[RMDB]
RNA sequence: GGGAACGACUCGAGUAGAGUCGAAAAGAUAUGGAUCCCAUCCUGGUACCAUCAUCGAUCUCGGAAACGAGGGAGAUGACCAGGAGUGGGAUCCUAAGUCAAAGGCAUUUUGUUCGCAAAAUGCCAACGUUAAACCUCAGUUCGCUGAGGUUUAACGAAAAGAAACAACAACAACAAC
Reactivity to 2A3 in 0.01 (KOAc 150mM, MgCl2 10mM, bicine 150mM(pH8.5), 24C), signal-to-noise 2, nucleotides 027 to 126: g050a050u100a050u170g000g000a000u020c000c000c010a000u000c000c010u000g000g070u100a200c090c140a170u170c020a010u090c010g000a000u020c000u000c010g020g060a100a080a040c010g000a010g010g020g010a070g000a010u000g020a010c000c000a000g010g020a010g080u040g000g000g000a000u010c000c000u000a010a010g010u000c030a060a090a100g000g000c010a000u030u000u000u000g090u040u090c300g000c120a010a010a000a000u020g010c050c000a000a000
Reactivity to DMS in 0.01 (KOAc 150mM, MgCl2 10mM, bicine 150mM(pH8.5), 24C), signal-to-noise 3, nucleotides 027 to 126: g000a020u000a300u000g000g010a010u000c000c000c000a110u000c000c000u000g000g000u000a120c220c180a180u010c010a030u000c050g010a300u010c000u000c000g020g010a110a050a180c000g000a020g000g000g000a300g000a010u000g030a050c000c000a000g010g010a040g020u020g000g010g000a000u000c010c000u000a010a030g010u010c060a080a080a150g000g000c000a000u000u000u010u000g010u000u020c150g000c000a000a000a010a000u000g010c000c000a040a010